[RMDB]
RNA sequence: GGGAACGACUCGAGUAGAGUCGAAAAACUUCUGGUUUCUUGUAGUUCCAGUCAAAGAAACAUCCAGCAACUUUUUUGGUUGUAUAGUCAAAGGUGCUUGAGUCAUUGGCAUGUAAGAUAAAUAUACCUAUUCUAGUGACUUCGGUCACUAGAAUAGAAAAGAAACAACAACAACAAC
Reactivity to DMS in 0.01 (KOAc 150mM, MgCl2 10mM, bicine 150mM(pH8.5), 24C), signal-to-noise 1, nucleotides 027 to 126: a040c020u000u000c040u000g020g000u000u000u000c010u000u000g010u010a070g000u000u000c030c000a160g020u000c090a060a040a020g020a040a050a060c040a090u010c100c100a110g010c010a010a030c030u000u000u000u010u010u010g000g010u010u010g010u000a030u020a070g010u000c070a030a030a060g010g010u000g000c000u000u000g000a080g000u010c050a080u010u000g010g010c060a020u020g000u010a080a110g020a150u000a040a040a050u010a150u010a170c090
Reactivity to 2A3 in 0.01 (KOAc 150mM, MgCl2 10mM, bicine 150mM(pH8.5), 24C), signal-to-noise 1, nucleotides 027 to 126: a000c070u080u010c080u100g060g010u010u000u080c020u020u060g030u060a070g040u110u040c000c010a020g060u060c000a020a060a060g010a040a110a000c010a030u000c030c030a010g000c000a050a170c060u110u070u050u090u260u180g050g020u030u070g120u090a160u130a090g070u140c040a000a030a060g070g030u020g000c010u020u120g020a030g010u060c020a100u060u070g040g020c000a010u150g080u070a130a000g020a120u160a070a220a030u100a020u060a060c000